[RMDB]
RNA sequence: GGGAACGACUCGAGUAGAGUCGAAAAGCCCGAAAGUUCGCUUUCGGGCAAAAGAAAGCUCCUGCGGGAGCAAAGCACACGCAGAAUAACAGUGCAAAAGCAAAAGUACCGUGUUCGCACGGUACAAUCAUUAAAGUUAGUUCGCUAACUUUAAUGAAAAAGAAACAACAACAACAAC
Reactivity to 2A3 in 0.01 (KOAc 150mM, MgCl2 10mM, bicine 150mM(pH8.5), 24C), signal-to-noise 3, nucleotides 027 to 126: g010c000c020c000g010a000a000a000g030u110u210c250g030c170u010u000u010c000g000g000g000c010a000a000a000a000g000a020a060a000g010c000u000c000c010u040g020c220g060g020g010a020g000c040a050a050a000g010c010a010c000a010c070g070c050a050g120a300a040u190a190a030c050a030g000u010g020c010a040a060a030a050g090c040a020a050a050a090g000u000a000c010c020g000u000g030u040u070c250g000c070a000c000g000g000u000a000c000a000a010
Reactivity to DMS in 0.01 (KOAc 150mM, MgCl2 10mM, bicine 150mM(pH8.5), 24C), signal-to-noise 3, nucleotides 027 to 126: g000c010c000c000g020a010a010a000g000u000u010c220g010c010u000u000u000c000g000g000g040c010a010a020a060a120g010a120a150a210g000c010u000c000c010u000g030c120g040g010g020a030g010c000a020a070a130g000c000a040c040a080c160g000c090a110g000a120a060u010a060a090c120a050g000u000g010c030a090a070a120a150g000c150a040a040a060a080g020u000a000c000c000g010u000g010u000u010c210g010c020a000c000g010g010u000a000c010a040a070